[RMDB]
RNA sequence: GGGAACGACUCGAGUAGAGUCGAAAAUGAGUUAUGGUUAUCAAAUGUCUUUGUGGUUGGUAUCUAUCAAUCUGUGUGAGCUGCAUCAGAUGCCCAUGUUGUAUUGACAUUGCAAUAGACCUUGUGACUAUCUGAUUCUGUUCGCAGAAUCAGAUAGAAAAGAAACAACAACAACAAC
Reactivity to DMS in 0.01 (KOAc 150mM, MgCl2 10mM, bicine 150mM(pH8.5), 24C), signal-to-noise 7, nucleotides 027 to 126: u010g000a110g010u010u000a050u000g000g010u010u000a060u000c090a100a060a050u010g010u000c020u000u000u000g020u000g010g020u010u000g010g020u000a060u000c090u000a050u010c070a050a060u010c030u000g010u000g020u010g010a090g010c090u000g010c110a070u000c130a040g000a080u000g010c020c010c070a070u000g010u000u000g010u000a060u000u000g010a040c060a040u000u000g000c140a070a050u010a070g010a060c040c060u000u000g010u010g000a210
Reactivity to 2A3 in 0.01 (KOAc 150mM, MgCl2 10mM, bicine 150mM(pH8.5), 24C), signal-to-noise 4, nucleotides 027 to 126: u140g020a060g050u130u120a090u190g010g020u060u070a060u190c060a020a080a100u040g040u000c020u030u080u050g040u020g080g060u040u060g010g000u050a030u020c010u020a060u070c060a100a040u020c040u010g110u010g050u040g180a030g060c060u020g000c080a050u040c040a040g020a070u040g000c020c000c000a030u130g040u090u070g100u070a040u010u020g010a000c000a040u010u070g010c030a040a070u030a100g070a060c030c000u030u070g090u020g080a030
Structure probing data (DMS and 2A3) for a 177-nucleotide construct. The data come from the RNA Mapping Database (RMDB), library OK2TRN. For DMS, 13,318 sequencing reads were counted. The 2A3 profile rests on 4,606 reads. The RNA was probed in 150 mM KOAc, 10 mM MgCl2 and 150 mM bicine (pH 8.5) at 24 C. For 2A3 the reverse transcriptase was SuperScript II with manganese.